RNA sequence: GGGAACGACUCGAGUAGAGUCGAAAAUCAGAGCUGUGAAGGGAUACCUCAUGAAUCUGUGGGUCACAGGGAAGCAUUUUCUUGUCUGUGUGUUUUGAUUAAGGCCUACAGAUUGUAGAAGUCUUGAUGGAUGUGGGCCCUCUGGGGGGUUGAAGUGCCCAUACAAUAACUUCGGUUAUUGUAUGGGAAAAGAAACAACAACAACAAC
Reactivity to DMS in 0.01 (KOAc 150mM, MgCl2 10mM, bicine 150mM(pH8.5), 24C), signal-to-noise 1, nucleotides 027 to 156: u000c050a140g010a050g000c040u010g050u000g010a150a060g020g040g000a170u000a010c040c000u000c020a080u000g020a060a040u000c020u000g020u000g030g070g040u010c000a010c050a050g010g020g030a030a040g020c140a070u000u020u010u000c110u000u000g000u000c100u080g000u000g010u000g000u000u000u010u020g030a110u000u020a100a080g010g000c000c000u000a040c030a030g000a060u000u000g010u020a060g000a060a140g010u010c070u000u000g020a090u010g020g000a100u010g020u000g060g030g000c040c030c020u030c000u000g010g020g010g000g010g040u000u000g020a020a220g020u000g000
Reactivity to 2A3 in 0.01 (KOAc 150mM, MgCl2 10mM, bicine 150mM(pH8.5), 24C), signal-to-noise 2, nucleotides 027 to 156: u120c010a000g020a010g070c050u060g040u060g180a030a050g000g050g010a030u080a120c020c020u040c060a060u200g040a000a020u000c000u010g000u030g010g030g000u020c010a000c050a060g000g040g020a010a010g020c050a110u140u090u190u050c030u060u140g190u110c050u000g070u000g010u000g120u110u040u190u130g090a090u110u120a090a060g020g000c000c010u000a000c000a010g030a020u010u020g020u050a040g010a130a020g010u000c010u110u120g040a050u090g020g000a020u050g010u060g000g000g020c000c000c010u060c020u010g010g010g000g000g000g000u030u060g020a060a000g020u040g070

Annotation
The record gives the reactivity of an RNA of 207 nucleotides to DMS and 2A3. For 2A3 the reverse transcriptase was SuperScript II with manganese. Conditions: 150 mM KOAc, 10 mM MgCl2 and 150 mM bicine (pH 8.5), 24 C. The 2A3 profile rests on 901 reads. The data come from the RNA Mapping Database (RMDB), library OK3TST.